This 177-nucleotide RNA was probed chemically with DMS and 2A3. The 2A3 profile rests on 1,438 reads. Reactivities are rounded to 0.1 and cut off at 0 and 3. Reactivities are given for positions 27 through 126. For 2A3 the reverse transcriptase was SuperScript II with manganese. The RNA was probed in 150 mM KOAc, 10 mM MgCl2 and 150 mM bicine (pH 8.5) at 24 C.
RNA sequence: GGGAACGACUCGAGUAGAGUCGAAAAUCUCAGCCCCUCCACCUUGGAGUGCCCUAUUCGGAGCACUGCAGUUCCCGAUAGAAAGGCUAAGCACCUCGCAAUGAGGUAAGGUGGGACUUUUCCUUCUCUACCCCUAUUUGUUCGCAAAUAGGGGUAGAAAAGAAACAACAACAACAAC
Reactivity to DMS in 0.01 (KOAc 150mM, MgCl2 10mM, bicine 150mM(pH8.5), 24C), signal-to-noise 1, nucleotides 027 to 126: u000c020u010c030a220g000c020c010c010c010u000c010c030a060c050c040u010u000g020g010a080g020u000g000c010c030c000u000a120u000u020c300g010g000a060g020c000a070c110u010g010c100a100g010u010u000c050c010c030g040a040u000a030g000a020a040a040g000g010c010u000a110a070g000c120a070c010c000u000c020g000c220a050a070u000g010a030g010g010u000a020a020g010g030u000g010g010g010a040c210u000u000u020u000c020c010u000u000c030u000
Reactivity to 2A3 in 0.01 (KOAc 150mM, MgCl2 10mM, bicine 150mM(pH8.5), 24C), signal-to-noise 1, nucleotides 027 to 126: u030c020u000c000a180g070c000c000c000c000u000c000c000a010c030c010u020u040g060g070a090g060u070g030c020c000c030u030a050u080u050c060g000g010a040g000c050a070c080u140g010c020a070g000u010u080c010c010c000g010a000u020a000g030a020a130a010g020g000c020u030a010a040g020c050a020c010c000u000c000g050c110a190a200u300g000a000g040g000u020a020a010g000g020u000g000g050g010a020c030u040u060u090u080c010c000u040u000c020u000